[RMDB]
RNA sequence: GGGAACGACUCGAGUAGAGUCGAAAAACGCGAGGAUUCGUCCUCGCGUACAUAAGUGAGUUCGCCGGAUAGCUGCCUAAGUGAGUUCGCCGGUUAGCUGCCAAGCACAUAGUUUCGACUAUGUGAAUCUGAUAGGUCCAUUCGUGGACCUAUCAGAAAAAGAAACAACAACAACAAC
Reactivity to 2A3 in 0.01 (KOAc 150mM, MgCl2 10mM, bicine 150mM(pH8.5), 24C), signal-to-noise 1, nucleotides 027 to 126: a000c000g020c000g010a000g000g020a010u090u110c180g080u030c080c000u000c000g010c000g000u000a000c010a030u200a010a070g080u130g120a050g020u030u030c030g000c000c000g000g000a040u010a040g000c000u160g240c010c110u230a250a080g070u110g190a020g000u020u070c020g010c020c010g060g030u000u010a000g000c000u060g090c000c000a000a010g050c010a000c000a010u000a010g020u040u110u110c300g050a040c000u000a000u000g010u040g020a010a070
Reactivity to DMS in 0.01 (KOAc 150mM, MgCl2 10mM, bicine 150mM(pH8.5), 24C), signal-to-noise 2, nucleotides 027 to 126: a020c000g000c000g030a010g010g000a040u000u000c230g030u010c000c010u000c000g000c000g020u000a020c140a050u000a090a050g020u010g000a020g030u000u000c110g000c020c000g030g000a080u000a020g000c030u000g010c070c100u010a090a160g000u010g000a080g020u000u000c070g000c020c010g000g010u000u000a060g000c000u000g010c030c080a160a100g010c020a020c000a010u000a000g040u000u000u010c200g000a020c000u000a000u000g020u000g020a050a090
This 177-nucleotide RNA was probed chemically with 2A3 and DMS. Reactivities are given for positions 27 through 126. The reactions ran in a buffer of 150 mM KOAc, 10 mM MgCl2 and 150 mM bicine (pH 8.5), at 24 C. For 2A3, 883 sequencing reads were counted.